RNA sequence: GGGAACGACUCGAGUAGAGUCGAAAAUGCAAGUAGUGCUAUUGUUGGAAUCACCGUACCUAUUUAGGUUUACGCUCCAAGAUCGGUGGAUAGCAGCCCUAUCAAUAUCUAGGAGAACUGAGCUAUGAAAACGGUAUUGGCUUCGGCCAAUACCGAACCUAUAAAGAGCGUUCGCGCUCUUUAUAGGAAAAGAAACAACAACAACAAC
Reactivity to 2A3 in 0.01 (KOAc 150mM, MgCl2 10mM, bicine 150mM(pH8.5), 24C), signal-to-noise 5, nucleotides 027 to 156: u130g010c030a070a040g070u110a030g080u060g040c010u030a020u040u090g130u040u090g050g040a060a070u080c020a020c020c010g020u030a010c000c000u060a130u220u190u220a040g000g010u010u050u050a040c050g000c000u000c000c010a050a040g010a030u070c040g010g020u020g040g050a030u020a020g050c070a010g010c010c000c020u050a070u070c040a080a050u060a030u230c040u030a040g010g010a030g000a040a020c060u100g070a030g110c040u050a090u220g110a040a120a040a010c010g000g000u000a000u000u000g000g010c010u000u020c100g060g000c000c000a000a000u000a000c000c000g000a000a000
Reactivity to DMS in 0.01 (KOAc 150mM, MgCl2 10mM, bicine 150mM(pH8.5), 24C), signal-to-noise 2, nucleotides 027 to 156: u000g010c060a080a110g030u000a070g010u000g040c020u010a060u000u000g030u010u000g030g010a110a160u000c000a080c020c010g000u000a030c000c010u010a240u010u000u000a030g020g010u000u000u000a030c050g010c060u000c010c010a050a100g000a050u010c100g040g040u010g010g000a090u000a030g030c050a250g020c100c080c010u000a150u010c050a090a090u000a070u000c070u000a100g020g010a070g020a050a160c070u000g000a160g010c050u020a080u000g010a060a060a070a160c040g000g030u010a010u010u000g010g000c010u000u000c300g050g000c000c000a020a020u000a000c000c010g020a000a000
This 207-nucleotide RNA was probed chemically with 2A3 and DMS. High 2A3 reactivity points to a flexible backbone, as in loops and unpaired stretches. Source: RMDB library M2RFPK, as collected in RNAgym. The RNA was probed in 150 mM KOAc, 10 mM MgCl2 and 150 mM bicine (pH 8.5) at 24 C.